This 177-nucleotide RNA was probed chemically with DMS and 2A3. The data come from the RNA Mapping Database (RMDB), library OK2TST. For 2A3, 13,164 sequencing reads were counted. The DMS profile rests on 25,255 reads. Values are in units of 0.01, from 0 to 300, in steps of 10.

RNA sequence: GGGAACGACUCGAGUAGAGUCGAAAACUGCAGGCCCCUGGUAGGGUUGCUCAUUACAGUUCUCCACUAUUGUCAGUUCAGGGUGAUGCUCAUCAGGCAGGUAUAGGGCCCAUUGCGGUCCUGGCGGCCUAGUAACAACAUUCGUGUUGUUACUAGGAAAAGAAACAACAACAACAAC
Reactivity to DMS in 0.01 (KOAc 150mM, MgCl2 10mM, bicine 150mM(pH8.5), 24C), signal-to-noise 9, nucleotides 027 to 126: c020u000g010c050a100g010g010c070c020c020c000u000g010g020u000a060g010g010g010u000u000g000c050u000c110a090u010u010a080c100a080g010u000u000c020u000c020c030a070c100u000a070u010u010g010u000c060a060g010u000u000c080a070g000g010g010u000g010a080u000g010c040u000c070a060u000c080a060g010g010c040a040g000g010u010a080u010a040g010g000g000c000c000c010a220u010u000g010c110g030g010u000c000c000u000g010g010c060g010g000
Reactivity to 2A3 in 0.01 (KOAc 150mM, MgCl2 10mM, bicine 150mM(pH8.5), 24C), signal-to-noise 6, nucleotides 027 to 126: c010u030g000c010a040g030g070c020c020c000c000u040g090g060u100a060g030g050g030u050u100g010c010u030c050a090u060u160a060c040a050g030u050u010c020u000c020c010a030c040u090a110u130u200g070u070c060a030g040u070u090c030a010g020g000g050u040g030a050u080g020c020u010c050a080u030c010a020g060g000c010a020g080g000u080a100u120a110g000g000g010c000c010c020a090u120u300g030c170g000g000u000c000c000u010g020g030c010g020g020